[RMDB]
RNA sequence: GGGAACGACUCGAGUAGAGUCGAAAAUUGCAAGCCUUCGGGCUUGCAAGGUGUCGGAAUGCGGAAAAUAUAAUCCUCCGCUUAAGGAUUAUACCGACUUAAGUGCCAGGCUGUUCGCAGCCUGGAAAACAUGUACUGUUUUCGAACAGUACAUGUUAAAAGAAACAACAACAACAAC
Reactivity to DMS in 0.01 (KOAc 150mM, MgCl2 10mM, bicine 150mM(pH8.5), 24C), signal-to-noise 9, nucleotides 027 to 126: u000u000g000c000a010a010g010c000c000u000u010c210g040g020g020c000u000u010g010c000a000a010g000g020u010g010u000c010g010g010a180a090u010g010c070g010g000a070a060a090a210u010a040u010a050a050u000c080c040u000c150c150g010c150u000u010a080a040g010g000a050u000u000a050u000a080c010c010g000a030c030u010u010a080a110g010u000g010c000c000a010g000g000c000u000g010u000u010c190g010c000a020g010c000c000u000g000g000a010a030
Reactivity to 2A3 in 0.01 (KOAc 150mM, MgCl2 10mM, bicine 150mM(pH8.5), 24C), signal-to-noise 6, nucleotides 027 to 126: u030u010g000c000a000a000g010c010c020u050u090c240g100g000g000c000u010u000g010c000a000a000g010g000u050g010u010c010g010g060a140a060u140g070c070g060g120a070a060a070a030u230a030u030a040a080u040c010c030u020c030c040g040c070u050u080a060a010g010g010a010u090u020a030u080a080c000c000g000a020c000u060u100a190a040g060u060g140c000c000a000g010g000c000u010g020u070u090c220g010c090a000g000c010c000u000g000g000a010a010
Structure probing data (DMS and 2A3) for a 177-nucleotide construct. It was measured as part of the RMDB library M2PK50. For DMS the reverse transcriptase was MarathonRT. The 2A3 profile rests on 14,183 reads. The reactions ran in a buffer of 150 mM KOAc, 10 mM MgCl2 and 150 mM bicine (pH 8.5), at 24 C.